This 177-nucleotide RNA was probed chemically with 2A3 and DMS. The RNA was probed in 150 mM KOAc, 10 mM MgCl2 and 150 mM bicine (pH 8.5) at 24 C. The DMS profile rests on 7,185 reads.
RNA sequence: GGGAACGACUCGAGUAGAGUCGAAAAGCCAUGAGUGAUGUCAAUCAGAUUCUGGAACUAGUAAAUAGUGUGGAGUCUGAUCAGUUCAAAAAGCAUUCGAUUGGUUUUUUUCGUGGAAUUUUGAGCACAGGGAUUAUUUAUUCGUAAAUAAUCCCUGAAAAGAAACAACAACAACAAC
Reactivity to 2A3 in 0.01 (KOAc 150mM, MgCl2 10mM, bicine 150mM(pH8.5), 24C), signal-to-noise 4, nucleotides 027 to 126: g000c010c000a010u020g010a010g040u220g010a020u000g030u080c050a030a020u000c010a020g000a010u020u000c000u010g060g080a150a010c010u010a010g060u170a080a200a300u010a020g010u020g090u080g040g010a010g010u000c000u020g000a000u000c000a010g070u050u140c090a150a110a010a000a000g010c000a000u000u020c010g060a020u000u020g090g000u050u000u000u000u000u000u120c090g020u110g070g130a220a190u270u140u160u280g060a060g130c150a010
Reactivity to DMS in 0.01 (KOAc 150mM, MgCl2 10mM, bicine 150mM(pH8.5), 24C), signal-to-noise 7, nucleotides 027 to 126: g000c010c000a010u010g000a300g010u010g000a020u000g000u000c120a160a040u010c000a010g000a020u000u010c010u000g010g020a250a020c000u000a010g000u020a120a110a160u000a000g010u000g010u010g000g010a030g010u010c000u000g000a000u010c130a100g010u000u010c170a070a050a120a130a130g000c010a020u000u000c020g000a180u000u000g000g010u000u000u010u000u000u000u000c040g020u000g010g010a120a100u000u000u010u000g010a110g020c200a240
For 2A3, 3,317 sequencing reads were counted.